[RMDB]
RNA sequence: GGGAACGACUCGAGUAGAGUCGAAAAGUAAAGGCAGAAACAGGGUCCUGGGACAUGCCUUUGGAAUCUCUUGGUUUCACAUGUUAGAGUCCUCCUUAAAUGACCAUUCUGGAUAUUCAAGGUAAACUGGACUCCAAAUGUAGCUUUUUUACAUCAAUACUAUCGGCAGUUUCGACUGCCGAUAGUAAAAAGAAACAACAACAACAAC
Reactivity to 2A3 in 0.01 (KOAc 150mM, MgCl2 10mM, bicine 150mM(pH8.5), 24C), signal-to-noise 1, nucleotides 027 to 156: g030u030a010a000a010g010g010c020a010g040a020a050a000c000a020g020g000g100u220c000c020u010g000g030g000a010c030a060u070g040c000c000u070u130u030g030g010a060a110u030c050u030c000u060u160g020g060u110u110u050c060a040c000a030u090g090u130u190a010g010a000g010u000c000c000u090c000c010u000u000a030a020a020u090g120a060c020c000a060u270u110c140u300g000g000a030u050a010u110u040c000a010a030g000g000u040a060a040a170c230u120g000g000a000c010u000c000c030a060a070a000u080g020u020a010g010c000u140u060u090u060u120u160a050c020a020u070c050a080a150
The data come from the RNA Mapping Database (RMDB), library OK3TST. Structure probing data (2A3) for a 207-nucleotide construct. The RNA was probed in 150 mM KOAc, 10 mM MgCl2 and 150 mM bicine (pH 8.5) at 24 C.